Chemical mapping of a 177-nucleotide RNA with 2A3 and DMS.
It was measured as part of the RMDB library OK2TRN.
For 2A3 the reverse transcriptase was SuperScript II with manganese.
RNA sequence: GGGAACGACUCGAGUAGAGUCGAAAAGGGCCACGUCGUUGGCCAGCAGGUAUUGCAGAUAUUCUUUGGCCUGGGCCCCAUCGACAUCGGUGAUGGUCAUGUGGGAAACAUCAAACACACCGGCUGCCCACCCAGUAUUCUUCGGAAUACUGGGUGGAAAAGAAACAACAACAACAAC
Reactivity to 2A3 in 0.01 (KOAc 150mM, MgCl2 10mM, bicine 150mM(pH8.5), 24C), signal-to-noise 2, nucleotides 027 to 126: g000g040g030c010c020a050c040g280u120c070g060u150u070g040g000c040c000a000g020c040a000g010g010u050a040u070u160g100c060a060g120a180u090a120u260u130c030u110u030u050g060g000c010c000u030g040g030g000c010c000c020c000a040u120c030g030a040c010a070u130c010g000g050u040g030a300u020g020g050u060c080a000u090g050u110g030g120g000a010a270a000c010a010u070c050a060a300a000c020a000c000a010c000c000g070g000c000u040g000c000
Reactivity to DMS in 0.01 (KOAc 150mM, MgCl2 10mM, bicine 150mM(pH8.5), 24C), signal-to-noise 2, nucleotides 027 to 126: g030g020g010c020c020a070c160g030u010c120g020u000u000g030g030c010c010a020g020c090a020g010g010u010a040u010u020g020c130a100g000a120u010a080u000u010c070u000u010u000g000g030c010c060u010g000g000g000c030c020c030c030a040u020c050g010a080c090a160u010c010g010g000u000g010a090u000g010g020u000c150a070u000g020u000g020g010g000a150a100a050c030a020u010c040a120a070a110c020a060c020a020c030c010g010g000c160u000g000c100